[RMDB]
RNA sequence: GGGAACGACUCGAGUAGAGUCGAAAAGAACAGACUGCCGCACUGGCUGCCCUGAUGAGAACAAACCCGUGACUAGCGUCGAAACAUCAACAGUGCGGGCUGUUGGUGUCGGGAGCCACUAAAAGAAACGAUAAUGGUAUUUCGAUACCAUUAUCGUAAAAGAAACAACAACAACAAC
Reactivity to 2A3 in 0.01 (KOAc 150mM, MgCl2 10mM, bicine 150mM(pH8.5), 24C), signal-to-noise 8, nucleotides 027 to 126: g040a070a020c040a030g090a050c040u080g030c010c000g020c020a040c050u030g030g010c040u080g070c010c000c020u110g040a100u080g030a050g050a060a030c050a050a070a030c000c010c010g020u030g050a120c090u110a050g030c010g070u060c030g080a110a050a050c020a010u030c010a000a020c010a040g020u030g200c050g000g050g000c010u020g000u020u020g000g010u010g030u050c040g010g010g020a010g010c010c030a040c030u080a040a060a020a050g130a040a150
Reactivity to DMS in 0.01 (KOAc 150mM, MgCl2 10mM, bicine 150mM(pH8.5), 24C), signal-to-noise 6, nucleotides 027 to 126: g010a100a160c070a040g010a100c060u010g010c020c030g000c030a060c050u010g010g010c060u010g010c020c010c030u010g010a040u000g000a140g000a070a060c110a050a090a110c130c050c020g010u040g010a080c120u030a120g000c090g000u010c040g010a110a070a040c030a030u010c030a000a020c020a020g020u020g010c120g010g000g010c010u000g000u000u000g000g010u010g010u010c050g000g000g000a120g000c030c050a080c080u010a050a080a060a110g000a110a120

An RNA of 177 nucleotides, treated with 2A3 and DMS and read out base by base. Conditions: 150 mM KOAc, 10 mM MgCl2 and 150 mM bicine (pH 8.5), 24 C. 2A3 adducts were read by reverse transcription with SuperScript II with manganese. The data come from the RNA Mapping Database (RMDB), library OK1LIB.